An RNA of 177 nucleotides, treated with 2A3 and DMS and read out base by base.
RNA sequence: GGGAACGACUCGAGUAGAGUCGAAAACAACGGUGCUGAGCCUCUAAAACACAACUCCUUUUACUGUGACCAUGGGUACGAAAGGCCAGUAAUCUUCGGAUCCGUAAAGUGUGGUUCAGCAGGGUCACAAUGUCCAGAAUUUCGAUUCUGGACAUUGAAAAGAAACAACAACAACAAC
Reactivity to 2A3 in 0.01 (KOAc 150mM, MgCl2 10mM, bicine 150mM(pH8.5), 24C), signal-to-noise 9, nucleotides 027 to 126: c030a030a010c030g100g030u030g000c000u000g000a010g000c030c000u060c040u140a120a110a110a010c060a020c010a040a130c050u100c010c030u040u040u050u090a060c050u060g110u130g110a160c010c020a130u140g120g010g020u200a060c060g100a190a080a080g010g000c010c000a030g020u080a020a050u050c060u140u100c050g020g000a040u030c020c040g040u080a050a110a080g070u080g020u030g060g020u000u000c000a010g000c000a000g020g030g010u020c010a010
Reactivity to DMS in 0.01 (KOAc 150mM, MgCl2 10mM, bicine 150mM(pH8.5), 24C), signal-to-noise 9, nucleotides 027 to 126: c100a130a120c130g010g020u000g020c010u010g000a030g000c000c000u010c140u040a090a080a120a150c070a020c080a070a150c160u010c030c020u020u030u010u010a080c070u010g010u010g010a090c050c040a070u050g010g020g010u020a040c080g000a050a060a050g010g010c050c050a110g020u030a080a080u030c060u010u020c050g000g000a020u010c060c070g000u010a040a060a090g020u010g000u000g000g000u010u000c010a000g020c010a030g000g000g010u010c080a130
The data come from the RNA Mapping Database (RMDB), library OK1LIB. Conditions: 150 mM KOAc, 10 mM MgCl2 and 150 mM bicine (pH 8.5), 24 C. For DMS the reverse transcriptase was MarathonRT. For DMS, 27,471 sequencing reads were counted.